Chemical mapping of a 207-nucleotide RNA with DMS and 2A3. For DMS the reverse transcriptase was MarathonRT. For 2A3 the reverse transcriptase was SuperScript II with manganese. The reactions ran in a buffer of 150 mM KOAc, 10 mM MgCl2 and 150 mM bicine (pH 8.5), at 24 C. For 2A3, 4,774 sequencing reads were counted.
RNA sequence: GGGAACGACUCGAGUAGAGUCGAAAAGAACAUGCUAUUAAUGAGUUGGUUCGUGCAAUUAUGCGUUACCUUAACUUUUCAGAUGCGGACAAGCGCCAUAUAUCGCAACAUUGGACGAGAACUAAGGUAGAAGAUAGCUUAACUAAGGCUCAAAUUAAAUAAUUUACUGGUUCGCCAGUAAAUUAUUAAAAGAAACAACAACAACAAC
Reactivity to DMS in 0.01 (KOAc 150mM, MgCl2 10mM, bicine 150mM(pH8.5), 24C), signal-to-noise 4, nucleotides 027 to 156: g020a080a110c060a090u010g010c020u000a100u000u010a110a140u000g000a070g010u000u000g020g020u000u000c050g000u000g020c050a080a110u000u000a110u020g020c050g030u000u000a040c030c020u020u000a060a100c030u000u010u010u000c040a170g010a100u000g010c060g020g010a100c080a100a100g010c050g010c060c070a080u010a090u000a080u000c050g010c010a120a050c080a100u000u010g020g010a080c100g010a060g010a050a050c060u000a030a030g010g010u000a070g010a090a170g010a070u000a050g010c030u000u000a070a100c070u010a050a150g010g010c020u000c040a040a050a130u010u000a070
Reactivity to 2A3 in 0.01 (KOAc 150mM, MgCl2 10mM, bicine 150mM(pH8.5), 24C), signal-to-noise 7, nucleotides 027 to 156: g060a060a030c050a050u090g000c020u080a030u150u060a220a090u130g030a020g070u050u040g030g050u040u020c050g000u060g050c020a050a090u100u050a080u240g010c000g030u040u100a060c020c000u080u070a100a100c030u110u140u110u070c070a060g030a150u070g050c030g030g030a060c060a110a060g040c040g020c040c010a050u090a010u020a020u190c020g010c050a010a040c010a100u010u050g030g050a010c020g010a010g020a060a020c030u030a040a040g070g020u040a030g030a090a010g020a050u040a010g010c000u040u020a020a040c040u050a070a040g030g010c040u040c020a070a070a090u200u280a110